[RMDB]
RNA sequence: GGGAACGACUCGAGUAGAGUCGAAAAGAACGAGUGGAUCCCAAGACGUGCAUCACGAAAUGGGAACAACUCGUAGGCGUGUUGUUCGCAUUUCGGAGAGAUUUGUCUUGCGAAGGGUACGCCAAGACUACUCGGUAGUAUUCGUACUAUCGAGUAGAAAAGAAACAACAACAACAAC
Reactivity to DMS in 0.01 (KOAc 150mM, MgCl2 10mM, bicine 150mM(pH8.5), 24C), signal-to-noise 9, nucleotides 027 to 126: g010a110a090c060g010a060g020u000g010g010a120u000c010c010c010a030a020g000a200c010g010u000g010c270a150u010c030a070c000g000a000a070a070u000g000g000g010a010a040c020a030a010c000u000c010g010u000a080g010g010c070g020u000g000u000u000g000u000u000c000g000c000a010u000u000u000c000g000g000a060g000a120g000a150u000u000u010g010u000c000u000u000g010c200g010a070a070g000g000g010u000a020c030g010c010c040a070a090g010a190
Reactivity to 2A3 in 0.01 (KOAc 150mM, MgCl2 10mM, bicine 150mM(pH8.5), 24C), signal-to-noise 9, nucleotides 027 to 126: g040a030a000c030g010a010g010u020g010g050a070u000c000c000c000a000a000g030a000c010g010u040g010c070a100u080c020a060c030g000a010a010a010u020g010g010g000a000a010c010a010a010c000u000c010g000u020a080g030g130c060g000u010g000u000u010g080u000u000c030g000c070a000u000u000u010c000g000g010a080g000a000g000a010u040u020u100g000u000c000u000u010g010c020g040a050a010g030g000g000u020a000c000g000c000c010a050a010g040a030
An RNA of 177 nucleotides, treated with DMS and 2A3 and read out base by base. It was measured as part of the RMDB library OK2TRN. The RNA was probed in 150 mM KOAc, 10 mM MgCl2 and 150 mM bicine (pH 8.5) at 24 C.